RNA sequence: GGGAACGACUCGAGUAGAGUCGAAAAAUCCUCAUGUUCAUAAGCGUGAUGAUUGGGUGUUCAUGCUCCAUGCAUGACAUGUGCCUCCUUUGAACCUUGUUACGACCUUGGCACAUUACCCAUCUGAAAAAGACGUUCGCGUUCGCGCGAACGUCAAUCUCCACAACUUCUUCGGAAGUUGUGGAGAAAAAGAAACAACAACAACAAC
Reactivity to 2A3 in 0.01 (KOAc 150mM, MgCl2 10mM, bicine 150mM(pH8.5), 24C), signal-to-noise 1, nucleotides 027 to 156: a000u030c030c000u060c030a100u040g010u100u070c060a220u230a300a060g020c000g040u010g030a090u180g050a030u090u180g000g000g010u090g000u070u070c000a000u000g000c000u100c240c150a180u220g000c000a000u000g000a020c000a000u030g000u000g030c000c000u060c030c060u020u140u170g060a100a090c020c050u140u190g070u300u190a020c160g050a100c050c010u140u140g020g000c000a000c000a030u000u050a020c000c000c010a020u000c000u010g150a070a140a000a000a020g000a000c000g000u000u000c000g000c040g000u110u110c140g010c000g000c000g010a000a000c000g000u000c000a000a000

Notes
The record gives the reactivity of an RNA of 207 nucleotides to 2A3. For 2A3 the reverse transcriptase was SuperScript II with manganese. For 2A3, 321 sequencing reads were counted. Conditions: 150 mM KOAc, 10 mM MgCl2 and 150 mM bicine (pH 8.5), 24 C.